Conditions: 150 mM KOAc, 10 mM MgCl2 and 150 mM bicine (pH 8.5), 24 C.
The record gives the reactivity of an RNA of 177 nucleotides to 2A3 and DMS.
For 2A3 the reverse transcriptase was SuperScript II with manganese.
In probing experiments dimethyl sulfate is read out at A N1 and C N3, which are open when not base-paired.
Source: RMDB library OK2TRN, as collected in RNAgym.
[RMDB]
RNA sequence: GGGAACGACUCGAGUAGAGUCGAAAAUGAGGCAUUGAGCCCUUUCUUGGAUGUUGAAGACAUCGGGGAUUUCCUAACAUUCAACAAUCUUCUUGCAGAUUCGAGGUAUGGAGAUGAGUCCGUCCAGGUUAACUACCUCUUUCGAGAGGUAGUUAACAAAAGAAACAACAACAACAAC
Reactivity to 2A3 in 0.01 (KOAc 150mM, MgCl2 10mM, bicine 150mM(pH8.5), 24C), signal-to-noise 5, nucleotides 027 to 126: u160g020a190g020g010c070a050u120u300g090a040g000c000c000c020u030u050u020c010u020u050g180g000a020u020g040u050u090g130a110a040g140a050c010a040u030c080g000g010g000g050a080u020u060u040c000c000u040a130a030c040a150u130u200c030a050a050c020a060a160u020c010u050u000c020u080u150g010c040a060g020a300u100u120c060g060a070g050g050u060a080u070g040g010a040g000a080u110g020a010g070u020c040c010g000u000c020c010a020g080
Reactivity to DMS in 0.01 (KOAc 150mM, MgCl2 10mM, bicine 150mM(pH8.5), 24C), signal-to-noise 6, nucleotides 027 to 126: u000g010a100g020g010c020a230u020u010g020a190g020c030c010c020u000u000u010c040u010u000g020g020a020u000g010u000u000g010a110a090g020a110c060a030u000c050g000g000g010g020a130u000u000u000c000c010u000a080a090c160a120u000u000c060a050a110c260a060a030u010c020u000u010c080u010u000g020c120a040g000a120u000u000c110g020a140g010g010u000a050u000g000g010a060g000a060u000g010a110g000u000c030c070g020u010c030c030a130g010